Structure probing data (DMS and 2A3) for a 207-nucleotide construct. Values cover nucleotides 27 to 156. For 2A3, 1,489 sequencing reads were counted. Source: RMDB library M2RFPK, as collected in RNAgym. For DMS, 3,052 sequencing reads were counted.
RNA sequence: GGGAACGACUCGAGUAGAGUCGAAAAGAAAGAAAGAAAGCGGUUGGGUGGGUCCUUCGACCGUCGUGGCGUAUUCGGACGCUUUACCACGACGCGAGGAAAUAGCGAGACCGACCACCCCCUUUAACAGAGGUAUAGUAGUUCGCUACUAUACCAAGUCCAAUCUAAAGUUCGCUUUAGAUUGGACAAAAGAAACAACAACAACAAC
Reactivity to DMS in 0.01 (KOAc 150mM, MgCl2 10mM, bicine 150mM(pH8.5), 24C), signal-to-noise 2, nucleotides 027 to 156: g010a130a050a090g020a170a140a170g010a090a120a090g030c160g000g000u000u010g000g020g000u000g010g020g010u010c020c020u010u000c090g000a100c150c000g020u000c020g030u000g020g030c020g010u000a120u010u000c040g000g000a140c040g040c070u060u000u000a040c020c000a040c020g000a020c020g000c000g030a060g030g000a050a060a080u000a080g020c070g010a180g010a120c060c030g000a050c010c010a040c010c000c000c030c000u000u000u000a030a210c180a190g000a150g020g020u000a010u000a000g020u000a070g010u000u020c300g040c010u000a030c000u010a010u000a010c020c010a020a080
Reactivity to 2A3 in 0.01 (KOAc 150mM, MgCl2 10mM, bicine 150mM(pH8.5), 24C), signal-to-noise 3, nucleotides 027 to 156: g050a030a040a030g040a100a070a000g050a090a080a000g080c110g100g100u230u200g110g030g010u020g010g030g040u030c030c030u110u160c020g030a050c010c050g010u000c010g000u010g020g000c050g020u090a100u070u180c080g060g050a050c030g040c020u070u080u080a040c020c000a000c000g010a000c010g000c010g000a010g040g040a020a080a020u090a020g020c030g000a040g010a060c030c000g050a050c000c000a000c010c000c020c000c030u010u110u120a120a070c110a060g050a030g100g000u000a000u000a000g000u000a000g000u000u030c130g000c120u000a000c000u000a000u010a000c010c000a000a000